[RMDB]
RNA sequence: GGGAACGACUCGAGUAGAGUCGAAAAGAUAUGGAACAUAGACCAUGCAAGCAGUGCGGAGAGGAGAAUCGGAAACGAUUCUCCCUCGGAUAGCUGUGAUGACCAUGGAGAACUAUGUUCCUAAGUCCACUUUCUUACAGUUCGCUGUAAGAAAGUGAAAAGAAACAACAACAACAAC
Reactivity to 2A3 in 0.01 (KOAc 150mM, MgCl2 10mM, bicine 150mM(pH8.5), 24C), signal-to-noise 7, nucleotides 027 to 126: g050a030u120a060u210g000g000a010a000c000a010u020a010g300a300c000c020a000u010g010c020a140a280g000c010a010g020u060g120c140g280g040a040g030a230g020g000a000g000a000a000u010c010g000g050a050a070a040c010g010a000u010u000c000u000c000c000c000u000c010g030g010a170u180a060g020c010u010g010u070g080a300u200g030a040c110c010a010u010g000g020a240g020a120a030c010u020a010u020g010u010u020c000c000u000a050a010g010u030c020
Reactivity to DMS in 0.01 (KOAc 150mM, MgCl2 10mM, bicine 150mM(pH8.5), 24C), signal-to-noise 7, nucleotides 027 to 126: g010a090u010a300u000g010g010a020a010c000a010u000a010g020a180c000c000a000u000g000c030a100a160g020c000a020g000u000g010c120g020g010a020g000a180g020g010a020g010a020a010u000c000g000g000a120a100a200c000g010a020u000u000c000u000c000c000c010u000c000g010g010a090u010a150g010c000u000g010u000g000a070u010g000a200c300c000a010u000g010g010a120g000a090a120c010u000a010u000g010u000u000c000c000u000a030a100g000u000c030